[RMDB]
RNA sequence: GGGAACGACUCGAGUAGAGUCGAAAAAUUUGAUAGUAGAUUUAAAACUUUGCAACAGAACCGUUCAUGGGUAUAGCAUGAAUUGUUUAACUGUCCUCUAGGAUUCCCGUCCUAUGGCAGUCGGUUCCUUACCUCACCAUUUCGAUGGUGAGGUAAGAAAAGAAACAACAACAACAAC
Reactivity to DMS in 0.01 (KOAc 150mM, MgCl2 10mM, bicine 150mM(pH8.5), 24C), signal-to-noise 2, nucleotides 027 to 126: a060u020u010u000g000a190u010a030g020u020a040g010a150u020u050u000a060a110a100a050c090u010u010u000g030c090a070a150c170a090g030a030a000c000c010g030u000u000c030a020u000g020g000g060u000a100u060a120g000c020a020u000g000a010a050u010u000g000u000u040u000a060a040c000u000g010u000c000c000u000c000u000a000g000g020a030u000u010c020c010c030g000u000c000c000u000a000u010g010g000c010a000g000u000c080g020g000u000u000c020
Reactivity to 2A3 in 0.01 (KOAc 150mM, MgCl2 10mM, bicine 150mM(pH8.5), 24C), signal-to-noise 5, nucleotides 027 to 126: a000u090u060u180g030a030u080a070g070u150a070g060a190u110u130u240a120a270a040a040c120u140u140u220g080c070a080a060c040a170g020a020a010c010c010g010u020u000c000a000u010g050g100g220u300a200u190a180g150c010a010u010g000a010a020u060u040g010u050u050u040a030a050c030u020g000u010c000c000u000c000u000a000g010g000a020u000u090c010c000c010g000u010c000c000u000a010u040g010g000c000a000g000u000c000g000g010u010u010c000